[RMDB]
RNA sequence: GGGAACGACUCGAGUAGAGUCGAAAAGGCCACGUCUGGGAACGGGCACGGCCUACCCCGUCCCCCUGGAACUCACGCCCGAGAACGCGGAGGCCGUGGCGCGCUUUCUGGGAGAUGCCGUGAACCGAUCUACCCCAGAUUUCGAUCUGGGGUAGAUAAAAGAAACAACAACAACAAC
Reactivity to 2A3 in 0.01 (KOAc 150mM, MgCl2 10mM, bicine 150mM(pH8.5), 24C), signal-to-noise 6, nucleotides 027 to 126: g030g020c050c040a070c130g070u010c000u020g030g010g080a080a060c020g000g060g040c010a010c030g020g000c010c000u290a300c010c000c000c000g010u050c010c000c000c000c020u060g050g070a090a060c020u050c100a050c050g060c000c040c010g070a070g010a080a010c030g010c020g040g050a040g020g000c010c000g030u070g050g030c050g000c000g030c140u050u050u000c020u060g000g010g000a120g000a030u130g020c010c010g030u050g040a050a040c010c000g010
Reactivity to DMS in 0.01 (KOAc 150mM, MgCl2 10mM, bicine 150mM(pH8.5), 24C), signal-to-noise 2, nucleotides 027 to 126: g020g000c020c080a300c190g010u000c030u000g010g000g050a070a180c030g040g000g000c030a100c130g000g000c010c030u030a040c000c000c040c030g000u020c020c030c010c030c070u010g000g010a030a010c120u010c110a050c120g010c010c000c070g000a050g020a070a040c110g020c190g000g020a040g000g020c020c010g050u010g030g020c030g070c010g000c070u000u000u000c010u010g010g000g000a060g000a140u020g000c030c000g000u000g000a090a090c020c010g000